RNA sequence: GGGAACGACUCGAGUAGAGUCGAAAAUCGGAAUUCGUUCCGAGCAAUCGGGGUCUAUCGUUCAUGAGCCUUUUGACGAGCUGAAGCCUCCACGGCUCGAUAAGGAACUACUCAUGGCGAUAGACGGAGGCACCCUCGUCGGCCCCUUCGGGGGCAAUGUCCAUUAGGAUUUCGAUCCUAAUGGACAAAAAGAAACAACAACAACAAC
Reactivity to 2A3 in 0.01 (KOAc 150mM, MgCl2 10mM, bicine 150mM(pH8.5), 24C), signal-to-noise 2, nucleotides 027 to 156: u040c000g000g040a010a040u130u080c160g050u120u000c010c000g020a040g030c110a080a090u190c070g010g000g040g000u000c010u000a000u000c000g050u190u300c010a000u020g010a040g050c000c030u060u100u160u230g240a120c090g000a000g000c000u000g000a090a010g020c000c000u000c010c000a020c030g000g020c000u000c000g000a010u040a110a030g020g000a060a040c110u170a100c030u300c000a000u010g010g010c000g000a000u000a000g030a000c000g000g000a010g000g010c000a000c010c010c050u000c000g300u040c120g190g000c000c000c020c000u070u180c240g040g010g000g010g000c040a000a040
The record gives the reactivity of an RNA of 207 nucleotides to 2A3. The reactions ran in a buffer of 150 mM KOAc, 10 mM MgCl2 and 150 mM bicine (pH 8.5), at 24 C. For 2A3 the reverse transcriptase was SuperScript II with manganese.